[RMDB]
An RNA of 207 nucleotides, treated with DMS and 2A3 and read out base by base. The RNA was probed in 150 mM KOAc, 10 mM MgCl2 and 150 mM bicine (pH 8.5) at 24 C. For 2A3 the reverse transcriptase was SuperScript II with manganese. The data come from the RNA Mapping Database (RMDB), library RNAMAK. DMS adducts were read by reverse transcription with MarathonRT.
RNA sequence: GGGAACGACUCGAGUAGAGUCGAAAAUGAUCUUUCGAGAUCAAUACCGGGGUCGAGUUCGGGGCAAGCCUGGACACUGAAGCCUCCACGGUGUCCAGGUGAUGACCUCUCUAGCGUGACUCGACGGAGGCACCCCCUUUCGUGUGUUCGCACACAACAUUAUAGCGUGUUUCGACACGCUAUAAUGAAAAGAAACAACAACAACAAC
Reactivity to DMS in 0.01 (KOAc 150mM, MgCl2 10mM, bicine 150mM(pH8.5), 24C), signal-to-noise 2, nucleotides 027 to 156: u010g000a060u000c040u010u000u020c220g000a050g000a010u000c020a050a140u010a110c020c010g030g010g040g040u000c020g020a080g000u000u000c050g050g020g010g010c030a120a230g000c020c000u020g020g010a050c010a010c020u000g010a070a130g020c000c010u000c010c040a300c010g000g030u000g020u000c010c010a040g020g000u000g010a060u000g010a110c050c020u010c030u000c070u010a160g000c100g010u010g010a080c010u000c010g020a030c050g030g030a060g010g030c020a300c010c000c010c000c030u000u020u010c100g040u000g030u000g000u000u020c200g050c030a040c010a030c000a040a180
Reactivity to 2A3 in 0.01 (KOAc 150mM, MgCl2 10mM, bicine 150mM(pH8.5), 24C), signal-to-noise 4, nucleotides 027 to 156: u060g010a010u020c020u060u160u160c300g140a060g010a060u010c020a020a030u150a110c020c020g000g000g110g010u020c010g010a020g000u060u110c050g010g010g010g020c150a300a020g000c010c010u000g010g000a000c010a000c000u030g040a170a040g020c000c010u000c000c000a020c020g000g000u000g010u010c000c000a010g000g010u000g020a060u160g010a050c010c000u030c020u010c050u070a080g110c060g150u150g040a020c010u000c020g000a000c020g000g010a000g000g010c000a030c010c000c000c000c010u000u100u160c130g000u030g010u010g020u030u090c150g070c070a010c010a000c010a040a070